An RNA of 177 nucleotides, treated with DMS and 2A3 and read out base by base.
For 2A3, 2,343 sequencing reads were counted.
Values cover nucleotides 27 to 126.
For 2A3 the reverse transcriptase was SuperScript II with manganese.
RNA sequence: GGGAACGACUCGAGUAGAGUCGAAAAGAUAUGGACAACACUAAGAAGCAGCGACUAUUCGGAAACGAACGAAUCGCUGAACUACUUCGAAGUGUUGUCCUAAGUCAAAGACUGGUUCGCCAGUCAAUCACCCCAAUAACUUCGGUUAUUGGGGUGAAAAAGAAACAACAACAACAAC
Reactivity to DMS in 0.01 (KOAc 150mM, MgCl2 10mM, bicine 150mM(pH8.5), 24C), signal-to-noise 2, nucleotides 027 to 126: g000a030u040a300u010g000g000a020c000a010a000c010a010c010u000a030a300g000a030a000g000c020a020g000c010g030a010c040u000a230u010u010c000g040g000a070a050a170c010g020a030a010c150g000a090a050u000c000g000c000u000g000a020a010c090u020a300c000u000u000c000g010a300a020g010u000g000u000u010g030u010c000c020u010a010a000g020u000c000a080a070a160g000a010c000u000g010g000u000u000c200g000c000c000a000g000u000c040a030a080
Reactivity to 2A3 in 0.01 (KOAc 150mM, MgCl2 10mM, bicine 150mM(pH8.5), 24C), signal-to-noise 1, nucleotides 027 to 126: g040a020u110a030u130g010g000a000c000a020a000c010a000c000u050a100a000g000a000a000g050c000a000g000c000g010a010c080u090a050u010u020c000g030g060a140a120a080c030g020a040a000c030g050a090a300u020c010g000c020u020g000a010a010c010u140a040c000u000u010c020g020a020a000g000u020g000u000u000g020u020c000c000u010a010a000g000u000c000a000a000a060g000a010c000u000g030g020u050u100c180g060c090c020a020g000u000c000a000a040